RNA sequence: GGGAACGACUCGAGUAGAGUCGAAAAUGAUUAGAUACCGUUGUAGUCCUAACCAUAAACUUUACUAUCCAAGAGUUGGAUUAGUUAUUUUAUACUCUUCCAGUACUUUUUGAGAAAUCAUAAGUCUGUAUACAUAGGUGUUCGCACCUAUGUAUACAAAAGAAACAACAACAACAAC
Reactivity to 2A3 in 0.01 (KOAc 150mM, MgCl2 10mM, bicine 150mM(pH8.5), 24C), signal-to-noise 7, nucleotides 027 to 126: u100g010a020u050u080a040g020a060u070a090c060c040g010u030u080g050u050a040g030u010c010c010u030a030a030c030c020a050u100a070a060a030c010u040u070u110a040c030u050a030u010c020c000a020a010g040a090g070u040u020g010g000a010u010u010a000g000u000u030a070u050u150u030u050a120u050a030c010u010c000u040u000c010c000a020g070u030a050c020u000u080u060u030u050g140a160g030a060a040a030u080c050a050u030a120a020g070u030c050u050
Reactivity to DMS in 0.01 (KOAc 150mM, MgCl2 10mM, bicine 150mM(pH8.5), 24C), signal-to-noise 4, nucleotides 027 to 126: u000g010a060u000u010a050g010a090u010a080c030c120g000u010u010g010u010a120g010u000c100c030u000a030a080c080c050a040u000a060a100a080c080u000u000u000a090c150u010a110u000c010c020a030a070g000a040g000u010u000g000g000a010u010u000a020g000u000u010a050u040u020u040u020a110u010a060c050u000c020u010u000c010c000a070g010u020a020c010u000u010u020u000u010g010a090g000a070a060a110u000c040a030u000a030a030g000u010c100u000